[RMDB]
RNA sequence: GGGAACGACUCGAGUAGAGUCGAAAAAACGCGGUAACCUCCACCUGGAGCAAUCCCAAAUAGGCAGGCGAUGAAGCGGCCCGCUGAGUCUGCGGGUAGGGAGCUGGAGCCGGCUGGUAACAGCCGGGUAUUAUUAGUUCUUCGGAACUAAUAAUACAAAAGAAACAACAACAACAAC
Reactivity to DMS in 0.01 (KOAc 150mM, MgCl2 10mM, bicine 150mM(pH8.5), 24C), signal-to-noise 3, nucleotides 027 to 126: a050a070c080g010c040g010g000u000a090a120c070c020u000c030c040a100c040c040u000g010g020a070g010c100a140a150u000c020c010c010a070a100a090u010a110g010g020c010a050g000g000c010g000a140u010g000a090a110g010c040g010g000c070c050c030g030c010u000g010a090g010u000c030u000g000c010g000g010g010u010a090g000g000g000a070g030c060u000g020g010a160g020c000c000g010g010c000u000g010g010u010a120a140c020a000g000c010c010g020g000
Reactivity to 2A3 in 0.01 (KOAc 150mM, MgCl2 10mM, bicine 150mM(pH8.5), 24C), signal-to-noise 1, nucleotides 027 to 126: a000a000c110g050c040g030g020u070a070a070c000c020u010c030c020a070c030c090u050g040g000a020g070c000a010a070u060c030c010c000a080a150a080u160a050g020g000c010a010g000g010c010g130a160u080g030a110a010g010c000g030g090c070c040c000g000c020u050g030a030g070u020c060u080g040c020g000g000g000u060a130g010g030g000a040g020c080u060g060g000a020g030c000c010g000g040c010u040g040g000u070a110a050c010a010g030c010c050g040g010

An RNA of 177 nucleotides, treated with DMS and 2A3 and read out base by base. The RNA was probed in 150 mM KOAc, 10 mM MgCl2 and 150 mM bicine (pH 8.5) at 24 C. 2A3 adducts were read by reverse transcription with SuperScript II with manganese. For DMS, 2,095 sequencing reads were counted. The data come from the RNA Mapping Database (RMDB), library RFMREP.